[RMDB]
RNA sequence: GGGAACGACUCGAGUAGAGUCGAAAAGAGCGAAUCAUUAACCAAGUAACAGGAGCGUAAAAGAAUCAUGGCGCAGCUAUCAGCCCCGAAAGUCAUUGUCAUGCUGGAAUCAUCCGGCACCGACGAGCUUCCUCAACUAUUUCGAUAGUUGAGGAAGAAAAGAAACAACAACAACAAC
Reactivity to 2A3 in 0.01 (KOAc 150mM, MgCl2 10mM, bicine 150mM(pH8.5), 24C), signal-to-noise 4, nucleotides 027 to 126: g070a010g010c040g050a040a080u060c030a040u060u130a040a040c030c020a080a030g070u030a110a030c020a100g040g050a060g010c050g040u070a030a050a040a070g070a050a040u070c020a030u070g020g000c050g000c040a020g000c010u020a030u190c030a030g030c020c000c000c010g090a100a060a000g070u050c070a110u050u100g020u020c000a000u050g000c010u010g000g060a050a090u180c040a170u030c070c000g000g000c010a010c010c050g020a020c010g010a010g000
Reactivity to DMS in 0.01 (KOAc 150mM, MgCl2 10mM, bicine 150mM(pH8.5), 24C), signal-to-noise 6, nucleotides 027 to 126: g000a070g010c040g020a100a050u010c070a070u000u010a090a110c060c060a080a090g010u000a060a070c090a070g000g010a070g020c050g000u010a040a050a110a060g010a070a070u000c050a030u000g020g010c050g020c040a050g010c060u010a060u000c070a090g010c070c000c020c050g010a060a070a080g000u010c080a080u000u000g010u010c010a160u000g010c000u000g010g010a040a180u020c240a110u010c010c010g000g010c000a020c100c070g010a010c040g000a070g010
Description: The record gives the reactivity of an RNA of 177 nucleotides to 2A3 and DMS. The RNA was probed in 150 mM KOAc, 10 mM MgCl2 and 150 mM bicine (pH 8.5) at 24 C.